The data come from the RNA Mapping Database (RMDB), library TTRDEL. This 177-nucleotide RNA was probed chemically with 2A3 and DMS. For DMS the reverse transcriptase was MarathonRT. The DMS profile rests on 6,749 reads.
RNA sequence: GGGAACGACUCGAGUAGAGUCGAAAAGAUAUGGACAUCUACCCACCAACUAUACAGCGAAGAACUCGGAAACGAGGGAGCUGUAGAGUUGAGGAUGUCCUAAGUCAAACUGGACUUCGGUCCAGAACAAUGUAACACGGUUCGCCGUGUUACAUUGAAAAGAAACAACAACAACAAC
Reactivity to 2A3 in 0.01 (KOAc 150mM, MgCl2 10mM, bicine 150mM(pH8.5), 24C), signal-to-noise 6, nucleotides 027 to 126: g050a070u230a170u260g000g000a010c000a010u010c000u080a300c010c000c020a020c010c000a000a000c000u010a000u010a030c000a010g070c040g270a300a020g080a140a050c000u000c000g020g060a090a070a050c020g010a010g000g000g000a010g000c000u000g000u000a010g000a000g000u000u010g010a010g000g000a000u010g000u010c010c000u020a080a010g080u030c130a120a070a160c010u000g000g010a000c000u030u120c300g070g000u010c000c000a000g000a010a010
Reactivity to DMS in 0.01 (KOAc 150mM, MgCl2 10mM, bicine 150mM(pH8.5), 24C), signal-to-noise 6, nucleotides 027 to 126: g000a070u010a190u000g010g000a030c000a000u000c000u000a120c010c010c010a300c140c000a000a010c000u000a060u000a000c000a000g020c000g000a130a120g000a090a170c010u010c000g000g000a100a050a200c010g010a010g000g000g000a060g010c000u000g000u010a000g000a010g000u000u000g010a100g000g010a020u000g000u000c000c000u000a030a080g020u000c090a070a090a170c000u000g000g000a010c000u000u010c130g030g000u000c000c010a000g000a080a150

Reactivities are given for positions 27 through 126.
2A3 adducts were read by reverse transcription with SuperScript II with manganese.